[RMDB]
Source: RMDB library TTRDEL, as collected in RNAgym.
An RNA of 177 nucleotides, treated with 2A3 and DMS and read out base by base.
For DMS the reverse transcriptase was MarathonRT.
The reactions ran in a buffer of 150 mM KOAc, 10 mM MgCl2 and 150 mM bicine (pH 8.5), at 24 C.
RNA sequence: GGGAACGACUCGAGUAGAGUCGAAAAGAUAUGGAGGGAGCUAAUCAGGCUUCUAUGGUCGGAAACGACCAUACUAGCCUAGUUAGCGAAGAACUCCUAAGUCAAAACUGUCAGUUCGCUGACAGAACAUAGUCGUUCAGUUCGCUGAACGACUAUGAAAAGAAACAACAACAACAAC
Reactivity to 2A3 in 0.01 (KOAc 150mM, MgCl2 10mM, bicine 150mM(pH8.5), 24C), signal-to-noise 1, nucleotides 027 to 126: g030a020u060a050u170g010g020a010g030g000g000a010g000c010u010a030a030u070c020a000g020g000c010u010u000c010u000a000u020g000g020u000c010g000g000a020a080a070c010g000a000c000c010a000u020a000c000u000a010g020c000c000u010a000g030u020u010a000g020c050g080a110a000g010a000a020c020u000c010c010u030a130a000g100u050c040a020a020a120a180c010u000g010u000c000a000g010u020u090c190g040c150u000g000a000c010a010g000a050a000
Reactivity to DMS in 0.01 (KOAc 150mM, MgCl2 10mM, bicine 150mM(pH8.5), 24C), signal-to-noise 2, nucleotides 027 to 126: g000a020u010a300u010g000g000a000g000g010g010a090g000c000u000a000a010u000c060a020g000g030c000u000u010c090u000a000u000g000g000u000c000g010g000a100a100a200c010g010a010c000c000a000u000a000c040u000a000g000c000c000u010a010g020u010u010a000g000c010g010a040a130g010a150a170c000u010c000c000u000a040a130g000u010c030a090a070a050a140c010u000g000u010c000a010g020u010u000c160g000c010u000g010a010c000a010g010a070a150
The DMS profile rests on 1,864 reads.